The data come from the RNA Mapping Database (RMDB), library OK3TST. This 207-nucleotide RNA was probed chemically with 2A3 and DMS. For 2A3 the reverse transcriptase was SuperScript II with manganese. For DMS, 5,309 sequencing reads were counted.

RNA sequence: GGGAACGACUCGAGUAGAGUCGAAAAGGAUUACAAUGAACCAGAACUGCAUAAUAGUAACGACCCAACAGUUGAUCUUUACGCUGAUACGUAUGCUACUCAAGCUGCAACCGAAAGUGAUUCAGAAUUGGAAGAUGCGCUCUUUUCACAGUUGGAACUACUGAUUACUAUUCGUAGUAAUCAGUAGAAAAGAAACAACAACAACAAC
Reactivity to 2A3 in 0.01 (KOAc 150mM, MgCl2 10mM, bicine 150mM(pH8.5), 24C), signal-to-noise 7, nucleotides 027 to 156: g050g020a050u100u090a060c050a040a090u180g030a040a050c050c030a040g050a100a040c050u070g000c050a070u100a150a080u080a200g060u040a110a050c070g070a050c010c000c030a030a030c030a050g010u070u060g060a060u050c050u060u100u060a030c030g030c030u040g030a070u010a120c050g050u070a040u140g040c000u030a080c020u020c100a060a030g010c040u030g010c020a030a060c010c010g070a090a060a030g060u050g050a070u080u060c040a030g070a160a110u090u050g020g010a040a030g020a040u050g030c050g020c050u040c020u060u100u070u080c090a090c010a060g020u040u070g060g020a030a020
Reactivity to DMS in 0.01 (KOAc 150mM, MgCl2 10mM, bicine 150mM(pH8.5), 24C), signal-to-noise 2, nucleotides 027 to 156: g010g020a130u000u010a040c060a100a110u010g020a080a080c020c030a140g020a080a100c070u000g000c040a140u000a060a140u010a070g010u010a070a070c050g010a110c020c010c010a040a080c060a070g000u000u000g020a080u010c040u000u000u000a040c000g030c030u000g000a110u000a030c070g030u000a070u000g000c030u000a020c050u000c060a050a070g020c010u000g000c050a060a220c020c020g010a070a050a090g010u000g010a060u000u000c030a090g010a070a100u010u000g010g020a060a100g000a070u000g010c040g010c060u000c020u000u000u000u000c040a040c040a120g010u000u000g000g000a030a190